The data come from the RNA Mapping Database (RMDB), library ARCHII.
Chemical mapping of a 207-nucleotide RNA with 2A3 and DMS.
2A3 adducts were read by reverse transcription with SuperScript II with manganese.
2A3 is a SHAPE reagent: it acylates the 2'-hydroxyl of flexible nucleotides of all four kinds.
RNA sequence: GGGAACGACUCGAGUAGAGUCGAAAACUGCACAAUUCAAUGUGGUUAGAAAACCAACUUGGAAUCCAAUCUCCAUGAGCCUACCAUCACAUGCGUUCUAGGGUUAACCUGAAGGUGUGAAGCUGAUGGGAAAAAGUAACCCAAACUGUAUGUGACACUAUGUCUGGAUGUUCGCAUCCAGACAUAGAAAAGAAACAACAACAACAAC
Reactivity to 2A3 in 0.01 (KOAc 150mM, MgCl2 10mM, bicine 150mM(pH8.5), 24C), signal-to-noise 2, nucleotides 027 to 156: c070u150g000c000a000c030a140a160u180u120c020a020a060u190g000u030g040g010u060u080a120g110a070a140a030a040c010c000a030a070c030u030u050g010g030a050a060u050c020c020a040a130u000c040u030c020c000a050u090g070a010g060c000c000u040a050c060c050a040u050c010a010c010a010u030g020c000g060u050u000c060u240a110g000g010g000u050u030a070a100c000c000u020g030a090a000g020g000u060g040u050g110a090a040g030c040u090g010a060u110g010g000g050a030a220a000a000a010g150u010a010a020c020c000c010a010a020a040c080u200g000u060a020u020g020u030g000a000c000a020
Reactivity to DMS in 0.01 (KOAc 150mM, MgCl2 10mM, bicine 150mM(pH8.5), 24C), signal-to-noise 1, nucleotides 027 to 156: c030u000g050c060a060c050a140a100u000u010c140a080a100u000g040u010g010g030u010u010a150g040a130a140a040a100c020c040a100a160c060u060u040g010g010a050a100u040c060c110a100a130u000c060u010c010c000a060u030g000a170g040c010c010u000a090c060c010a120u040c000a040c040a060u000g000c030g000u010u000c080u020a140g020g030g000u010u000a040a160c000c020u000g010a130a090g030g100u000g030u010g040a100a240g000c030u000g000a130u040g030g000g000a000a070a040a170a080g000u020a040a040c000c000c000a060a060a070c060u010g030u000a020u000g030u000g020a220c050a150